[RMDB]
RNA sequence: GGGAACGACUCGAGUAGAGUCGAAAACUCCAAUUCGUUGGAGCUUAAUCCUAAGUCGACCACGUUGAAAGCGUACAGAGCGUUGAAAUAUUCGGAAACGAAUAUGGAGCUCGUACGCUGGAGUGGUCGAUAUGGAGCACUGGGGGUUCGCCCCCAAGAAACAUAUAUUAUUCGUAAUAUAUGUUUCAAAAGAAACAACAACAACAAC
Reactivity to DMS in 0.01 (KOAc 150mM, MgCl2 10mM, bicine 150mM(pH8.5), 24C), signal-to-noise 3, nucleotides 027 to 156: c010u010c000c000a030a050u000u000c230g030u000u010g010g000a030g050c020u000u000a110a130u010c000c010u020a090a300g010u000c010g010a010c000c010a040c020g010u020u010g010a190a140a080g010c010g020u000a000c000a130g060a020g020c000g000u000u010g020a120a100a030u000a010u000u000c000g030g000a200a140a290c010g000a020a010u000a000u000g000g010a250g020c000u000c010g020u000a000c020g000c000u000g000g000a060g050u000g000g010u000c000g010a000u000a100u000g010g010a060g020c160a110c190u010g000g000g000g020g010u000u000c070g000c000c020c000c000c000a000a040
Reactivity to 2A3 in 0.01 (KOAc 150mM, MgCl2 10mM, bicine 150mM(pH8.5), 24C), signal-to-noise 4, nucleotides 027 to 156: c000u000c000c000a010a020u080u090c170g060u090u020g000g010a000g000c000u080u150a050a050u050c010c010u020a150a010g020u000c000g000a000c000c000a010c020g120u220u040g020a040a010a000g000c000g010u000a010c090a150g010a000g000c010g060u130u020g000a010a040a000u000a000u000u000c000g010g050a060a100a070c010g000a000a020u010a000u010g000g020a000g000c000u000c010g000u000a000c000g000c000u010g000g000a010g000u000g000g010u000c000g000a000u000a000u010g010g020a020g040c110a040c170u060g010g010g040g000g000u060u070c100g110c000c010c000c000c010a000a030